[RMDB]
RNA sequence: GGGAACGACUCGAGUAGAGUCGAAAAAACUGGGCCUGCGGGUCGCUGGUGUGCGGAAUGCGGGGGCCCUGGCCCAGACAGCGUUGCGCCGCCUCGACCUGGCGGGGCGCUUGCAGAGCAAGCCGUGGCCAGUAAUAAUCUUCGGAUUAUUACUGGCAAAAGAAACAACAACAACAAC
Reactivity to DMS in 0.01 (KOAc 150mM, MgCl2 10mM, bicine 150mM(pH8.5), 24C), signal-to-noise 2, nucleotides 027 to 126: a090a090c040u000g010g000g020c010c000u010g000c140g000g000g020u000c010g000c060u020g040g050u020g030u040g030c100g000g000a030a000u000g000c020g000g010g000g000g000c010c050c030u010g000g000c000c000c000a080g020a110c100a100g020c040g110u010u000g000c020g030c160c010g000c020c030u000c120g000a060c050c060u000g000g050c030g000g010g020g000c000g020c000u010u010g000c000a160g000a170g000c010a040a080g000c000c090g040u010g010
Reactivity to 2A3 in 0.01 (KOAc 150mM, MgCl2 10mM, bicine 150mM(pH8.5), 24C), signal-to-noise 3, nucleotides 027 to 126: a000a000c090u080g010g020g030c030c000u060g020c060g000g000g000u010c030g060c140u050g070g040u060g080u230g030c020g040g200a070a020u040g010c000g030g010g000g010g000c010c070c060u110g150g000c000c020c020a010g000a010c040a020g000c020g030u050u070g110c050g000c020c000g000c030c030u020c020g050a040c000c010u010g080g000c020g000g010g040g010c010g000c010u020u050g000c000a080g010a010g270c010a030a000g010c000c050g120u180g110

Chemical mapping of a 177-nucleotide RNA with DMS and 2A3. The RNA was probed in 150 mM KOAc, 10 mM MgCl2 and 150 mM bicine (pH 8.5) at 24 C. For 2A3, 2,197 sequencing reads were counted. The data come from the RNA Mapping Database (RMDB), library OK1LIB. For DMS, 3,257 sequencing reads were counted.